[RMDB]
The record gives the reactivity of an RNA of 177 nucleotides to DMS and 2A3.
The 2A3 profile rests on 166,692 reads.
The RNA was probed in 150 mM KOAc, 10 mM MgCl2 and 150 mM bicine (pH 8.5) at 24 C.
2A3 adducts were read by reverse transcription with SuperScript II with manganese.
DMS (dimethyl sulfate) methylates the pairing face of unpaired adenines and cytosines.
It was measured as part of the RMDB library OK2TST.
For DMS the reverse transcriptase was MarathonRT.
RNA sequence: GGGAACGACUCGAGUAGAGUCGAAAAGAUGUAGACGAUCAGGCGCAUGGUUCAGGCGUUGGCGGAAACUGCAACCAGUUUGGCAUAAGCGCCAAUCGGUCGCGCGCUACGCUGAUUGUCGUGCGGACAGUAGUAUUAGUUUCGACUAAUACUACUGAAAAGAAACAACAACAACAAC
Reactivity to DMS in 0.01 (KOAc 150mM, MgCl2 10mM, bicine 150mM(pH8.5), 24C), signal-to-noise 9, nucleotides 027 to 126: g010a080u000g010u000a100g010a090c120g010a060u000c060a120g010g010c020g020c010a030u000g010g000u000u000c210a170g010g010c020g010u000u010g030g010c010g010g000a070a080a120c150u010g010c040a040a030c040c010a110g010u000u000u000g010g010c010a120u010a100a160g010c230g000c000c000a010a010u000c040g010g000u000c040g010c020g010c020g010c020u000a030c050g000c000u000g000a090u000u000g000u000c020g020u000g000c010g010g000a210
Reactivity to 2A3 in 0.01 (KOAc 150mM, MgCl2 10mM, bicine 150mM(pH8.5), 24C), signal-to-noise 9, nucleotides 027 to 126: g060a020u110g030u180a030g030a130c070g030a070u060c060a040g080g100c010g000c010a010u030g050g010u100u070c070a020g050g010c020g040u100u140g020g000c020g040g050a170a150a050c090u170g000c010a010a020c020c010a080g010u010u010u020g020g000c030a030u060a260a120g080c040g000c080c000a000a010u020c020g010g010u020c010g000c000g000c010g000c020u020a010c020g000c020u020g020a100u070u090g040u050c010g000u010g000c010g010g040a020